[RMDB]
RNA sequence: GGGAACGACUCGAGUAGAGUCGAAAAUACGACGUAUUCGUACGUCGUAAAGGUACGAAAGUACAAUGGAGCAAAAGCAUGAGCUCCUAAAAAUCAUGCAAAACACGAGCCGAUUCGUCGGCUCGAACACAGUUUCUAUGUUCGCAUAGAAACUGUGAAAAGAAACAACAACAACAAC
Reactivity to DMS in 0.01 (KOAc 150mM, MgCl2 10mM, bicine 150mM(pH8.5), 24C), signal-to-noise 4, nucleotides 027 to 126: u010a020c000g010a020c000g040u000a020u010u000c220g020u000a010c010g020u000c000g010u000a000a040a130g010g010u000a000c000g010a110a100a140g010u000a020c000a130a130u000g000g010a010g010c010a110a080a130a110g010c020a010u000g000a040g010c000u010c000c000u010a000a020a030a010a030u000c010a000u000g010c000a090a050a090a110c200a130c030g010a010g000c000c000g010a040u000u010c160g010u000c000g020g030c010u000c000g020a030a090
Reactivity to 2A3 in 0.01 (KOAc 150mM, MgCl2 10mM, bicine 150mM(pH8.5), 24C), signal-to-noise 4, nucleotides 027 to 126: u060a000c000g000a000c010g010u020a010u020u090c190g020u060a010c000g000u000c000g000u000a050a010a000g100g000u000a000c010g050a150a050a020g010u010a010c060a060a300u300g000g000a000g000c010a060a100a120a070g010c000a020u010g000a000g000c000u010c000c000u020a030a030a000a000a010u030c010a000u020g000c000a030a030a030a040c150a010c030g000a000g000c000c000g010a020u010u030c160g050u000c000g120g000c000u000c000g000a000a000
Annotation: An RNA of 177 nucleotides, treated with DMS and 2A3 and read out base by base. Source: RMDB library M2PK50, as collected in RNAgym. For DMS, 3,966 sequencing reads were counted. For DMS the reverse transcriptase was MarathonRT.